RNA sequence: GGGAACGACUCGAGUAGAGUCGAAAAUGUGACGCCGCGGCCCAGCGGGUAGCAGACCGGCGGACGCGGUGCCCGCGGAUCCCGGGUGCUGCGGCUUAUGGAGGCGGCCCUCCCAAGAGCGGCGGCCUUGUAUAAAACAGUUCGCUGUUUUAUACAAAAAAGAAACAACAACAACAAC
Reactivity to DMS in 0.01 (KOAc 150mM, MgCl2 10mM, bicine 150mM(pH8.5), 24C), signal-to-noise 8, nucleotides 027 to 126: u020g010u010g010a120c120g010c000c000g010c000g010g010c010c010c020a110g010c050g000g010g020u010a080g020c090a120g010a110c020c020g010g000c050g000g010a050c030g010c010g010g010u010g000c030c010c000g010c070g010g010a110u020c040c030c010g010g000g010u020g010c000u000g000c010g000g000c010u000u010a080u040g000g010a130g010g010c030g000g010c020c000c020u000c010c080c140a100a160g000a080g010c080g000g010c010g010g020c030c020
Reactivity to 2A3 in 0.01 (KOAc 150mM, MgCl2 10mM, bicine 150mM(pH8.5), 24C), signal-to-noise 8, nucleotides 027 to 126: u200g030u050g030a030c040g000c000c000g000c010g020g040c000c010c010a020g030c030g010g010g000u020a040g040c100a030g060a170c000c010g040g010c020g040g020a010c020g000c000g130g000u020g010c000c000c000g000c050g040g020a140u110c020c020c010g000g010g010u070g000c010u010g000c000g010g000c000u040u030a090u120g070g000a020g020g020c050g040g010c010c000c000u030c020c020c010a120a040g030a000g030c060g010g000c000g000g000c000c000
Chemical mapping of a 177-nucleotide RNA with DMS and 2A3.
DMS adducts were read by reverse transcription with MarathonRT.
Source: RMDB libraries RFM100 and RFMREP, as collected in RNAgym.